Chemical mapping of a 177-nucleotide RNA with DMS and 2A3. For DMS the reverse transcriptase was MarathonRT. The RNA was probed in 150 mM KOAc, 10 mM MgCl2 and 150 mM bicine (pH 8.5) at 24 C. Source: RMDB libraries RFM100 and RFMREP, as collected in RNAgym.

[RMDB]
RNA sequence: GGGAACGACUCGAGUAGAGUCGAAAAAGGACAUGGCAUCCUAUUACCAGCCAUUGCACGAAAUUAAUAUGAUGCCACGUCCUCAUACUAGAUGAAACAACCACAUCAUAUCACGGGUGAAUCCAUUCGGUACAGUAGAUUUCGAUCUACUGUACCGAAAAGAAACAACAACAACAAC
Reactivity to DMS in 0.01 (KOAc 150mM, MgCl2 10mM, bicine 150mM(pH8.5), 24C), signal-to-noise 1, nucleotides 027 to 126: a010g000g000a000c000a120u000g000g020c000a000u000c000c130u000a010u000u020a000c290c110a080g000c100c260a070u040u000g030c050a180c040g000a130a210a130u000u000a000a000u000a000u000g000a020u050g000c010c010a120c020g000u000c000c000u000c020a020u000a170c090u000a050g000a080u000g010a020a000a080c180a070a190c010c010a020c000a020u030c060a030u000a060u120c110a000c150g050g070g060u000g000a060a110u010c090c000a180u000u000
Reactivity to 2A3 in 0.01 (KOAc 150mM, MgCl2 10mM, bicine 150mM(pH8.5), 24C), signal-to-noise 7, nucleotides 027 to 126: a000g000g000a020c010a010u020g000g000c000a000u010c000c020u000a000u010u010a030c060c050a020g090c060c060a250u080u280g050c100a060c190g090a100a040a090u090u030a010a010u040a000u020g000a000u000g000c000c000a010c010g000u000c000c000u000c000a030u090a050c040u080a060g080a090u060g060a100a130a070c070a040a040c020c020a050c030a060u060c040a030u090a030u250c060a040c090g030g000g020u080g060a030a020u050c020c010a040u040u010